Conditions: 150 mM KOAc, 10 mM MgCl2 and 150 mM bicine (pH 8.5), 24 C. This 177-nucleotide RNA was probed chemically with DMS and 2A3. Source: RMDB library OK2TST, as collected in RNAgym. Values cover nucleotides 27 to 126.
[RMDB]
RNA sequence: GGGAACGACUCGAGUAGAGUCGAAAAGUCACUCUCAGGUCAAAUUUUGCACGAUUUGCUGUUGGGUAGGCUCGGCAGGUGUCUGGAUGAUCUGCACCCCGUUUGUCUGCAAAGUUAUCCACAGGUGUCAGUUGAAAUAGUUCGCUAUUUCAACUGAAAAAGAAACAACAACAACAAC
Reactivity to DMS in 0.01 (KOAc 150mM, MgCl2 10mM, bicine 150mM(pH8.5), 24C), signal-to-noise 7, nucleotides 027 to 126: g000u000c040a060c040u000c020u000c040a070g010g020u000c040a030a060a080u010u000u000u000g030c120a090c140g000a060u000u000u000g020c020u000g010u000u000g000g000g010u000a060g010g010c020u000c090g010g010c030a030g010g020u000g000u000c060u010g000g010a110u010g010a060u000c040u000g010c040a150c030c010c010c070g010u000u000u000g010u000c030u010g020c060a060a050a080g000u010u000a070u000c020c030a070c160a080g000g000u000g010
Reactivity to 2A3 in 0.01 (KOAc 150mM, MgCl2 10mM, bicine 150mM(pH8.5), 24C), signal-to-noise 5, nucleotides 027 to 126: g010u010c010a010c020u040c010u010c020a020g010g070u080c030a040a090a110u070u100u080u180g070c040a020c100g040a050u030u050u160g020c020u040g060u220u090g030g020g020u060a070g030g020c020u020c040g030g000c020a030g030g050u060g040u050c040u050g080g060a120u070g010a030u040c010u050g000c040a050c000c000c000c010g010u010u100u090g060u030c020u010g020c000a060a030a050g010u050u040a050u040c010c000a040c030a100g130g020u080g060